[RMDB]
RNA sequence: GGGAACGACUCGAGUAGAGUCGAAAAGAUAUGGAAACAUCAUGUUAGCCUAUAAUCUCGGAAACGAGGUAGGCUAGGCAUGAGUGUUUCCUAAGUCAAAACCUAUAAAGCUUCGGCUUUAUAGGAAGAGUGUAAUCAAGUUCGCUUGAUUACACUCAAAAGAAACAACAACAACAAC
Reactivity to 2A3 in 0.01 (KOAc 150mM, MgCl2 10mM, bicine 150mM(pH8.5), 24C), signal-to-noise 5, nucleotides 027 to 126: g020a010u070a020u140g000g000a010a000a000c000a010u020c000a010u010g010u020u030a000g000c000c020u060a080u080a260a300u180c010u000c000g040g000a110a080a060c010g000a010g000g000u000a010g010g000c010u010a010g050g010c000a000u000g030a030g040u030g000u000u000u000c000c010u010a090a010g010u000c020a010a010a100a170c010c000u010a010u010a010a010a010g000c010u030u190c300g120g000c000u010u070u000a000u010a000g010g000a010a020
Reactivity to DMS in 0.01 (KOAc 150mM, MgCl2 10mM, bicine 150mM(pH8.5), 24C), signal-to-noise 5, nucleotides 027 to 126: g010a060u000a300u010g000g000a010a000a010c000a030u000c000a010u010g000u010u000a010g000c010c000u010a040u010a280a100u010c000u000c000g010g000a100a100a190c010g000a010g010g020u000a010g000g010c010u000a010g010g000c000a000u000g000a030g010u000g010u000u000u010c000c000u000a020a090g000u010c040a110a080a120a140c010c000u000a000u010a000a010a000g010c000u000u010c260g020g010c000u000u000u000a000u000a010g000g010a030a050
This 177-nucleotide RNA was probed chemically with 2A3 and DMS. The reactions ran in a buffer of 150 mM KOAc, 10 mM MgCl2 and 150 mM bicine (pH 8.5), at 24 C. DMS adducts were read by reverse transcription with MarathonRT. Values cover nucleotides 27 to 126. For 2A3 the reverse transcriptase was SuperScript II with manganese.